[RMDB]
RNA sequence: GGGAACGACUCGAGUAGAGUCGAAAACAAGAGGCUGGAAACCCAGAUCUUGGAGAGAGAACACUCGAGAGCUUCACUCGCCUUCUAGAAGAUCCUACCACCUUAAAUAUCAGAGGAGGGGCCAGUCCCACUUAUAUGAUUUCGAUCAUAUAAGUGGAAAAGAAACAACAACAACAAC
Reactivity to DMS in 0.01 (KOAc 150mM, MgCl2 10mM, bicine 150mM(pH8.5), 24C), signal-to-noise 7, nucleotides 027 to 126: c070a080a090g010a080g020g020c030u000g000g010a120a140a140c160c010c010a130g000a090u000c010u000u000g000g010a080g000a110g000a140g000a060a080c100a060c070u010c060g000a090g000a140g020c150u000u000c070a090c050u010c030g000c040c020u000u000c070u000a110g000a080a070g000a060u000c020c030u000a130c070c040a040c030c040u000u000a040a090a100u010a080u020c130a080g010a080g010g000a090g020g000g000g020c040c030a060g000u000c070
Reactivity to 2A3 in 0.01 (KOAc 150mM, MgCl2 10mM, bicine 150mM(pH8.5), 24C), signal-to-noise 8, nucleotides 027 to 126: c020a010a040g040a030g180g060c020u020g010g030a180a210a230c030c000c000a010g000a030u010c010u020u050g050g000a060g000a000g000a000g020a120a020c030a020c070u040c040g070a080g000a030g110c050u090u070c040a030c040u020c010g020c020c000u060u070c020u060a100g020a170a010g010a100u030c010c000u060a070c010c030a050c020c000u050u050a070a190a060u220a150u150c080a050g000a020g080g030a030g010g010g000g010c010c000a010g020u030c000